[RMDB]
This 207-nucleotide RNA was probed chemically with 2A3 and DMS.
Source: RMDB library OK3TST, as collected in RNAgym.
For 2A3 the reverse transcriptase was SuperScript II with manganese.
DMS adducts were read by reverse transcription with MarathonRT.
The 2A3 profile rests on 1,950 reads.
The RNA was probed in 150 mM KOAc, 10 mM MgCl2 and 150 mM bicine (pH 8.5) at 24 C.
RNA sequence: GGGAACGACUCGAGUAGAGUCGAAAAGAGGCCUGGCUCAUGGAUGGGUUUGAACCACCUCAGGACUGAAGAUGAGCGGCUCAGUUUCACUAACAACAAGAACAGUGACAAAUUCCCUGCCCGGCCCAAGCUCUGUGGUCCUUAUGCAGGACCUUCAACCACUAGGAGUAUUCGUACUCCUAGUGGUAAAAGAAACAACAACAACAAC
Reactivity to 2A3 in 0.01 (KOAc 150mM, MgCl2 10mM, bicine 150mM(pH8.5), 24C), signal-to-noise 3, nucleotides 027 to 156: g100a080g010g040c030c030u030g030g010c030u050c100a060u130g030g050a140u050g020g020g070u050u120u190g050a040a040c040c000a040c010c020u080c050a050g010g060a050c020u030g040a020a030g040a080u100g000a000g020c010g030g000c020u010c030a000g010u000u050u100c030a030c020u050a150a060c120a010a050c030a160a000g060a130a040c030a080g020u020g080a010c030a020a120a030u070u040c000c000c020u030g010c010c010c020g000g040c030c030c020a030a030g000c020u000c020u050g090u070g010g000u040c020c000u070u060a220u270g060c060a020g000g010a010c000c000u060u080c020a000
Reactivity to DMS in 0.01 (KOAc 150mM, MgCl2 10mM, bicine 150mM(pH8.5), 24C), signal-to-noise 2, nucleotides 027 to 156: g000a110g000g000c040c040u000g030g020c020u020c040a040u020g000g020a070u000g010g040g000u020u010u020g050a050a110c030c000a010c020c000u000c060a060g000g000a170c070u000g020a080a110g020a110u010g000a170g020c070g030g050c060u010c000a040g010u010u000u000c030a170c020u020a090a140c050a000a110c150a070a130g000a030a050c110a110g020u010g020a200c140a070a070a070u000u000c000c000c000u000g000c020c020c110g000g000c030c000c030a020a170g000c030u000c020u000g000u000g020g010u000c000c000u000u000a110u010g030c120a040g000g010a020c020c000u000u000c040a110